The record gives the reactivity of an RNA of 177 nucleotides to 2A3 and DMS. For DMS, 5,370 sequencing reads were counted. Source: RMDB library TTRDEL, as collected in RNAgym. The reactions ran in a buffer of 150 mM KOAc, 10 mM MgCl2 and 150 mM bicine (pH 8.5), at 24 C.
RNA sequence: GGGAACGACUCGAGUAGAGUCGAAAAGAUAUGGAUGGGUCAUGGCAGCGCCCAUGAGACACUCGGAAACGAGGAGCUGCAUGCCCAUCCUAAGUCAAACUGUAGGUCGGUUCGCCGACCUACAGAAGCUAUUUACAGUGUUCGCACUGUAAAUAGCAAAAGAAACAACAACAACAAC
Reactivity to 2A3 in 0.01 (KOAc 150mM, MgCl2 10mM, bicine 150mM(pH8.5), 24C), signal-to-noise 5, nucleotides 027 to 126: g010a010u070a030u140g000g000a000u010g000g020g050u300c120a010u080g300g070c010a010g010c010g060c020c050c040a070u170g020a050g030a030c110a020c090u080c050g030g030a060a070a070c040g020a060g040g010a040g000c000u010g000c000a010u010g000c010c010c010a000u010c000c000u000a010a000g010u000c020a060a050a100c000u000g000u000a000g020g000u000c000g000g050u050u070c230g050c080c000g000a000c000c010u000a000c000a000g000a000a010
Reactivity to DMS in 0.01 (KOAc 150mM, MgCl2 10mM, bicine 150mM(pH8.5), 24C), signal-to-noise 4, nucleotides 027 to 126: g010a020u000a300u010g000g000a000u010g000g000g020u020c060a010u010g000g020c000a020g000c000g010c090c030c050a090u000g000a120g010a160c140a160c040u010c050g020g000a090a100a150c010g010a030g000g000a140g000c000u000g000c000a040u000g000c000c000c010a000u000c010c000u000a020a060g010u000c040a120a120a190c000u000g000u000a010g000g020u000c000g000g020u000u010c240g010c000c000g000a000c000c000u000a000c000a000g000a050a080
In probing experiments dimethyl sulfate is read out at A N1 and C N3, which are open when not base-paired. For 2A3, 14,064 sequencing reads were counted.